[RMDB]
RNA sequence: GGGAACGACUCGAGUAGAGUCGAAAAGACAUGCUAACGAGCAUGGUUAGAUCAGUACAAUCUCAGAUAAAGGUGGGAGAUGCUGCCCAUAAAUCAACAUACCAUCUCAUCUUUGAAGAGGUACUAGUACGAAUCAGAGAUUCGUCUCUGAUUCGUAAAAAGAAACAACAACAACAAC
Reactivity to DMS in 0.01 (KOAc 150mM, MgCl2 10mM, bicine 150mM(pH8.5), 24C), signal-to-noise 9, nucleotides 027 to 126: g000a110c010a000u000g000c000u010a160a140c300g020a170g010c010a000u000g000g010u010u010a090g010a150u010c100a030g010u000a020c030a140a130u000c000u000c010a030g010a220u010a030a030a010g010g030u000g000g000g000a050g000a030u000g000c030u000g000c080c040c040a160u010a050a080a100u010c020a010a010c020a020u000a100c180c100a110u000c000u000c040a010u000c010u000u000u000g010a290a100g000a030g010g010u000a010c020u010a110g020
Reactivity to 2A3 in 0.01 (KOAc 150mM, MgCl2 10mM, bicine 150mM(pH8.5), 24C), signal-to-noise 9, nucleotides 027 to 126: g070a020c000a000u020g000c000u100a280a110c160g150a090g010c010a010u010g010g010u040u130a090g000a120u130c080a020g000u010a010c050a080a220u060c020u000c020a010g010a070u160a120a030a010g010g000u010g000g010g000a050g000a020u020g000c020u020g000c030c020c010a090u240a030a060a020u070c010a000a030c010a020u080a150c050c030a170u010c000u000c010a030u000c000u020u030u040g040a050a020g000a010g010g020u010a010c010u020a030g100
The record gives the reactivity of an RNA of 177 nucleotides to DMS and 2A3. Source: RMDB library OK2TRN, as collected in RNAgym.